[RMDB]
Overview: An RNA of 177 nucleotides, treated with DMS and 2A3 and read out base by base. DMS (dimethyl sulfate) methylates the pairing face of unpaired adenines and cytosines. 2A3 is a SHAPE reagent: it acylates the 2'-hydroxyl of flexible nucleotides of all four kinds. Reactivities are rounded to 0.1 and cut off at 0 and 3.
RNA sequence: GGGAACGACUCGAGUAGAGUCGAAAAAGUGCCUCCCACGAGAAGAAGAGCUGGCUCCUAUAGUGCGCCCCGAGGCAGAAGUACCGGUAAUCGAGGGGAUGGAAGCCCUCUUCCUCGAGACUGGAAAACGUAAACGACAGUUCGCUGUCGUUUACGUAAAAGAAACAACAACAACAAC
Reactivity to DMS in 0.01 (KOAc 150mM, MgCl2 10mM, bicine 150mM(pH8.5), 24C), signal-to-noise 2, nucleotides 027 to 126: a100g020u010g000c060c020u000c030c020c020a160c050g000a120g000a110a070g020a040a020g010a060g020c110u010g030g020c000u000c020c010u020a050u000a060g000u040g010c100g010c030c000c000c020g000a160g000g000c130a080g000a080a160g030u000a100c030c020g000g010u000a080a090u000c050g010a110g000g000g000g020a070u010g000g010a060a040g030c040c000c020u000c000u010u000c000c010u000c000g010a130g010a050c100u010g010g000a090a030a110
Reactivity to 2A3 in 0.01 (KOAc 150mM, MgCl2 10mM, bicine 150mM(pH8.5), 24C), signal-to-noise 2, nucleotides 027 to 126: a000g160u100g080c000c040u030c000c010c010a000c010g030a010g010a180a020g010a010a000g020a010g000c110u050g030g010c010u000c010c010u090a110u100a160g160u200g090c080g050c030c000c000c040g000a030g000g050c040a030g050a200a010g020u080a080c050c080g090g030u130a070a070u050c030g010a040g000g000g010g000a010u030g010g020a100a070g000c000c000c000u000c000u030u010c010c010u010c000g010a060g000a000c050u040g040g000a000a160a000